[RMDB]
RNA sequence: GGGAACGACUCGAGUAGAGUCGAAAAAGGGGCUCGCGUCAACACACUUGGCCUGCAGGCCAUGGUGCGAGCAGCUUCCACAGCCUGGCAAGACCUUUGACCGCACAGCCUCCGCGUGGCCGGAGAGACAGAGGUGUAAGUUCGCUUACACCUCUGUAAAAGAAACAACAACAACAAC
Reactivity to 2A3 in 0.01 (KOAc 150mM, MgCl2 10mM, bicine 150mM(pH8.5), 24C), signal-to-noise 7, nucleotides 027 to 126: a000g080g010g030g000c000u010c010g020c010g060u050c040a120a080c060a030c030a050c280u050u050g010g000c000c030u190g140c180a090g010g000c000c000a030u040g010g000u030g000c000g000a000g000c000a010g020c000u080u050c020c000a040c010a030g030c000c030u030g030g020c040a060a020g050a170c010c000u060u070u110g060a060c000c020g060c030a040c040a050g050c000c010u000c010c020g010c020g050u090g060g020c060c010g030g020a060g000a010g030
Reactivity to DMS in 0.01 (KOAc 150mM, MgCl2 10mM, bicine 150mM(pH8.5), 24C), signal-to-noise 4, nucleotides 027 to 126: a050g020g000g000g020c020u010c040g020c010g000u000c040a100a070c160a120c150a120c150u040u010g010g010c000c000u030g030c300a180g010g000c000c020a010u000g010g000u010g010c030g020a040g000c010a040g000c020u000u010c030c030a080c120a080g000c010c030u010g010g030c060a060a020g010a110c050c020u010u000u020g010a080c010c020g030c070a060c090a080g010c100c000u000c000c020g010c040g010u020g010g010c130c010g010g020a110g000a120g010